[RMDB]
RNA sequence: GGGAACGACUCGAGUAGAGUCGAAAAAGAUCACUGGUCUACGGACCAGUGAUCAGCGCUCACUUCGUCCUCUGCCCCGGCAGACCACACGAAACCCGCAGAGCGCCUAGUUACGACUAGGCGCUCAAAAGACAACCUCAUUCGUGAGGUUGUCUUUAAAAGAAACAACAACAACAAC
Reactivity to 2A3 in 0.01 (KOAc 150mM, MgCl2 10mM, bicine 150mM(pH8.5), 24C), signal-to-noise 3, nucleotides 027 to 126: a000g000a000u000c000a000c000u000g000g020u000c030u050a110c290g060g010a000c000c000a000g010u000g000a000u000c000a000g000c030g010c000u040c010a070c020u050u040c040g020u020c000c030u010c030u040g020c000c000c010c010g020g020c010a020g010a080c010c000a070c000a000c020g060a070a060a060c000c000c030g060c130a060g000a000g010c000g000c000c000u000a000g000u010u050a080c250g020a010c140u000a000g010g000c000g000c000u000c000a010
Reactivity to DMS in 0.01 (KOAc 150mM, MgCl2 10mM, bicine 150mM(pH8.5), 24C), signal-to-noise 2, nucleotides 027 to 126: a060g000a010u000c000a000c000u000g030g020u000c000u000a100c190g010g000a030c000c000a000g010u000g010a000u010c000a060g000c130g000c020u020c040a080c070u030u010c090g020u010c070c140u010c050u000g000c010c030c070c090g000g000c080a020g000a060c070c070a050c190a020c150g010a020a060a080c020c030c010g020c090a110g000a000g000c010g010c000c010u000a010g000u020u040a090c130g010a040c000u000a000g000g020c000g000c000u000c000a000